This 177-nucleotide RNA was probed chemically with DMS and 2A3. The data come from the RNA Mapping Database (RMDB), library TTRDES. Conditions: 150 mM KOAc, 10 mM MgCl2 and 150 mM bicine (pH 8.5), 24 C. For DMS, 14,241 sequencing reads were counted.

[RMDB]
RNA sequence: GGGAACGACUCGAGUAGAGUCGAAAAGAUAUGGAUCCCGUGGGACAUGCUGAGAGUGUCGGAAACGACAUGGUAGCAACAGCCCACAGGGAUCCUAAGUCAAAACCGCACGGUUCGCCGUGCGGAAUCAUUACGAAGUGUUCGCACUUCGUAAUGAAAAAGAAACAACAACAACAAC
Reactivity to DMS in 0.01 (KOAc 150mM, MgCl2 10mM, bicine 150mM(pH8.5), 24C), signal-to-noise 7, nucleotides 027 to 126: g000a050u000a300u010g000g010a010u000c000c000c010g020u000g010g010g010a060c110a210u000g020c000u000g010a170g010a260g010u000g000u000c010g010g000a080a070a130c000g010a010c010a000u000g000g010u010a040g010c010a050a070c260a160g000c000c000c000a000c010a110g020g000g000a000u000c000c000u000a010a080g000u000c030a120a070a110a180c000c000g000c010a010c010g000g010u000u010c250g010c000c000g000u000g000c000g000g000a010a020
Reactivity to 2A3 in 0.01 (KOAc 150mM, MgCl2 10mM, bicine 150mM(pH8.5), 24C), signal-to-noise 5, nucleotides 027 to 126: g020a020u050a030u130g000g000a000u000c030c000c010g000u000g000g010g000a180c200a300u300g010c020u040g040a100g010a050g300u010g000u010c000g010g000a040a050a010c010g010a000c000a020u080g020g100u190a010g000c020a070a080c040a200g060c000c000c000a000c010a010g000g000g000a000u000c000c000u010a010a000g020u000c020a010a010a090a210c000c000g000c000a000c000g010g100u060u100c300g040c110c010g010u000g000c000g010g000a000a020